[RMDB]
RNA sequence: GGGAACGACUCGAGUAGAGUCGAAAAUGUACCUGUAGGGACUCGAGACAUCGAUGUCUUUUGUGAUAUCGAUGAUGGUCUUUCUCGCAGUUUCGACGUGUUCCUCUUCUUCGGAAAAAACAAGGAACUUGAGAGCUUCAAGCCUGUGCGGAAGCCGUGUCCUGGAUAAUUUCGAUUAUCCAGGACAAAAAGAAACAACAACAACAAC
Reactivity to 2A3 in 0.01 (KOAc 150mM, MgCl2 10mM, bicine 150mM(pH8.5), 24C), signal-to-noise 2, nucleotides 027 to 156: u170g010u060a040c000c010u030g040u090a130g000g010g020a000c020u000c040g090a050g020a030c000a000u000c000g000a000u010g060u080c030u120u270u160u250g200u080g000a000u000a000u000c000g000a000u010g000a030u060g140g000u070c000u030u020u000c010u000c000g010c070a000g000u000u000u030c000g000a010c050g050u150g050u050u010c000c010u100c010u110u050c010u080u100c160g040g050a020a000a000a000a050a020c170a100a070g060g000a090a050c000u020u090g070a100g010a010g130c040u070u060c030a050a060g040c010c050u120g040u090g060c040g030g010a030a040g040c020c010g100
Reactivity to DMS in 0.01 (KOAc 150mM, MgCl2 10mM, bicine 150mM(pH8.5), 24C), signal-to-noise 2, nucleotides 027 to 156: u000g000u000a130c060c000u000g040u020a070g020g030g020a040c030u010c070g000a170g040a180c000a030u010c000g010a010u000g020u000c000u000u000u010u000g060u010g030a020u000a010u000c020g000a030u000g020a130u010g050g010u000c020u000u010u000c030u000c000g010c070a060g020u000u010u000c030g010a090c060g040u010g040u000u000c040c010u000c100u010u000c080u020u000c100g030g010a000a050a050a110a070a070c050a070a090g020g000a050a020c010u000u000g010a120g000a200g040c080u000u000c020a050a120g040c000c010u000g000u000g030c030g010g010a100a220g000c040c020g010
The data come from the RNA Mapping Database (RMDB), library OK3TST. Chemical mapping of a 207-nucleotide RNA with 2A3 and DMS. The reactions ran in a buffer of 150 mM KOAc, 10 mM MgCl2 and 150 mM bicine (pH 8.5), at 24 C. DMS adducts were read by reverse transcription with MarathonRT. The DMS profile rests on 3,269 reads. Reactivities are given for positions 27 through 156.